Source: RMDB library OK2TRN, as collected in RNAgym.
Structure probing data (2A3 and DMS) for a 177-nucleotide construct.
Conditions: 150 mM KOAc, 10 mM MgCl2 and 150 mM bicine (pH 8.5), 24 C.

[RMDB]
RNA sequence: GGGAACGACUCGAGUAGAGUCGAAAAGCAGACUUGUCCGACCUGUCAUGGUUCUGGUCAGGUGCAGAUGCGCCAGGGAUUCUUCGCUGUACAGCAGACCUGUCCACACUGUCAGGGCCGCGGUACGCUAUCGUGCCUUUUUCGAAAGGCACGAUAGAAAAGAAACAACAACAACAAC
Reactivity to 2A3 in 0.01 (KOAc 150mM, MgCl2 10mM, bicine 150mM(pH8.5), 24C), signal-to-noise 2, nucleotides 027 to 126: g050c030a000g040a140c060u090u090g030u020c010c010g000a030c000c020u110g100u210c060a120u200g060g050u100u110c050u080g000g030u050c010a020g000g040u060g040c040a010g030a170u110g040c020g010c020c020a030g070g020g040a050u200u030c060u070u060c100g040c120u070g030u110a050c030a030g000c000a010g010a070c010c000u020g000u070c040c010a110c020a020c080u070g020u090c010a020g000g020g000c000c030g030c020g000g010u040a040c040g000
Reactivity to DMS in 0.01 (KOAc 150mM, MgCl2 10mM, bicine 150mM(pH8.5), 24C), signal-to-noise 6, nucleotides 027 to 126: g020c050a080g000a060c060u000u000g010u000c020c020g010a090c040c010u010g010u020c140a090u010g010g010u000u000c050u000g040g000u000c020a030g010g000u010g020c090a100g000a140u000g020c070g010c130c010a070g020g010g020a120u010u010c110u000u000c070g020c030u010g010u010a030c070a120g030c020a120g010a070c030c010u000g010u010c040c090a090c150a090c120u010g000u000c020a030g000g000g000c010c030g020c050g010g010u010a040c100g010